RNA sequence: GGGAACGACUCGAGUAGAGUCGAAAAAAAGACGCGGUUGCCGAUCGGUAUGGAUGCCACCGUGACGGCUCAAUCACACAAGUGCCAACGAUAACGAGUCGCUCGCUAUUGCUGCGUAACUGACGGCUAGAUACAGCCAGGUUCGCCUGGCUGUAAAGUGUACAGUGGUAUUCGUACCACUGUACACAAAAGAAACAACAACAACAAC
Reactivity to 2A3 in 0.01 (KOAc 150mM, MgCl2 10mM, bicine 150mM(pH8.5), 24C), signal-to-noise 3, nucleotides 027 to 156: a000a010a000g100a040c060g020c030g020g050u080u030g000c010c010g030a080u020c030g010g050u130a100u160g080g030a050u110g020c030c020a000c010c020g010u010g020a040c010g000g000c000u010c020a050a080u080c010a010c000a020c040a160a090g030u060g170c070c040a150a030c090g040a050u090a130a020c040g000a020g020u000c000g020c050u010c000g040c040u050a070u130u140g000c030u000g020c020g070u070a100a080c020u050g030a030c000g040g000c000u010a020g010a050u080a020c000a000g000c000c000a000g000g010u020u020c050g020c040c000u010g000g000c000u000g000u000a000a010a000
Reactivity to DMS in 0.01 (KOAc 150mM, MgCl2 10mM, bicine 150mM(pH8.5), 24C), signal-to-noise 1, nucleotides 027 to 156: a030a040a080g000a100c050g000c000g020g030u000u000g020c010c000g010a100u000c030g000g020u000a080u000g000g010a220u000g000c010c020a050c040c010g010u000g020a220c030g020g040c030u000c020a040a050u000c030a100c070a060c090a120a090g000u000g010c080c000a040a070c080g040a070u000a030a090c070g000a110g000u000c050g010c020u010c030g000c020u000a020u000u000g010c000u000g010c060g000u000a060a140c100u020g000a070c050g050g020c040u000a140g010a300u000a030c020a000g000c000c000a020g000g020u000u000c300g000c000c000u000g000g030c010u000g020u000a000a020a080